[RMDB]
RNA sequence: GGGAACGACUCGAGUAGAGUCGAAAACGAUCCUCGAGAGAGGAUCGACGAGUCUUCGGACUCGAUUACCGCGUCGAUGUGCCGCGGGGCUACGAUGGUAUUGUGGGAAAGAAUACCAUUGUACCUUCUUGUCGUAGCCGAACAACUUGCACGUCAAAUUAUAUGAUCGAUUCGUCGAUCAUAUAAUAAAAGAAACAACAACAACAAC
Reactivity to DMS in 0.01 (KOAc 150mM, MgCl2 10mM, bicine 150mM(pH8.5), 24C), signal-to-noise 6, nucleotides 027 to 156: c040g020a010u000c000c000u010c000g010a300g000a300g010a010g020g000a000u000c010g000a060c030g000a020g010u000c010u000u010c300g040g010a020c010u000c000g010a090u000u000a280c010c010g010c010g010u010c030g010a030u010g030u000g010c090c040g040c050g010g010g010g030c010u000a010c000g010a050u000g030g020u000a020u000u000g040u010g010g010g000a150a120a220g010a170a220u010a100c010c000a020u010u000g010u000a010c010c010u010u000c120u010u010g020u000c010g010u000a020g010c010c010g000a050a060c080a070a080c160u010u000g000c010a040c010g020u020c010a090a170
Reactivity to 2A3 in 0.01 (KOAc 150mM, MgCl2 10mM, bicine 150mM(pH8.5), 24C), signal-to-noise 9, nucleotides 027 to 156: c010g000a000u000c000c000u010c010g050a060g000a000g000a000g030g000a000u000c000g000a010c000g000a000g000u000c010u040u140c240g080g010a000c000u000c000g010a070u110u170a090c000c000g000c000g020u040c140g010a010u010g000u010g000c000c000g000c000g030g050g000g000c000u000a000c000g010a020u130g000g000u000a010u010u050g010u030g010g020g060a070a250a130g150a130a100u120a140c000c000a000u000u020g000u000a000c000c000u140u220c120u130u270g030u010c000g000u000a000g000c000c000g010a030a010c050a030a070c060u090u080g000c000a000c000g000u000c000a020a020